[RMDB]
RNA sequence: GGGAACGACUCGAGUAGAGUCGAAAAGUUUUAUCAAGUCGAACCAUUUAAUCAUGGCUAUUCUUAUAUCUCCUGCUAAUAAUACAGGAUGGGGGAUGGGUUCUCGUAAAAUGUAUGGAGGCUUAAUUGGAGGAGCAAGAGAGUAUAGUGAAGAAACGUAGUCCAUUAAGUUCGCUUAAUGGACUACAAAAGAAACAACAACAACAAC
Reactivity to DMS in 0.01 (KOAc 150mM, MgCl2 10mM, bicine 150mM(pH8.5), 24C), signal-to-noise 2, nucleotides 027 to 156: g010u000u010u010u000a110u010c030a030a100g040u000c030g000a060a150c000c000a060u000u000u000a120a110u020c190a030u000g010g010c000u000a080u000u000c070u000u000a080u000a120u010c040u000c010c010u000g040c000u010a040a130u000a110a170u000a080c020a040g020g020a060u010g010g000g030g010g000a080u000g010g020g000u010u010c030u010c050g000u000a050a030a050a090u010g000u000a070u000g010g010a040g030g000c060u010u010a020a110u000u000g010g010a060g010g010a080g000c030a050a110g030a100g020a050g020u000a050u000a060g040u000g000a080a080g000a060a060a120c200
Reactivity to 2A3 in 0.01 (KOAc 150mM, MgCl2 10mM, bicine 150mM(pH8.5), 24C), signal-to-noise 5, nucleotides 027 to 156: g010u010u030u090u150a130u120c070a040a030g070u030c020g040a020a060c010c020a050u080u090u140a100a050u100c060a020u050g020g000c020u080a050u080u030c030u070u180a090u020a040u180c040u020c020c000u000g050c020u040a120a090u110a210a030u100a200c040a020g050g020a050u060g030g000g000g010g020a010u030g040g010g010u010u050c030u000c010g020u020a050a090a070a060u110g040u090a060u120g040g020a010g010g000c000u060u120a070a040u160u090g020g000a020g010g010a000g000c010a040a020g020a000g000a000g040u050a030u040a090g080u070g070a070a050g010a030a050a000c050